[RMDB]
RNA sequence: GGGAACGACUCGAGUAGAGUCGAAAAUUGUGCUGCGGAUGUCGGCCGCGAUCUCGGCAAGUUUCGGAUCUUUCUUAGCCGCAUAAUAAACCGACACGCCGUUUGCGAUCAGCGAUACCUGUCCGGCGAUGACCCGUCAGUUCGCUGACGGGUCAUCAAAAGAAACAACAACAACAAC
Reactivity to 2A3 in 0.01 (KOAc 150mM, MgCl2 10mM, bicine 150mM(pH8.5), 24C), signal-to-noise 2, nucleotides 027 to 126: u170u040g060u130g050c130u070g000c030g000g000a000u030g020u040c010g000g010c050c060g040c030g000a160u070c030u020c010g000g050c000a000a000g030u000u010u050c110g080g000a120u040c040u030u050u000c000u000u140a110g040c010c030g180c060a000u040a130a020u040a170a110a000c020c000g030a000c030a000c000g040c000c010g070u060u170u270g000c120g000a080u030c010a020g040c000g020a000u040a130c000c000u000g000u040c050c030g000g010c020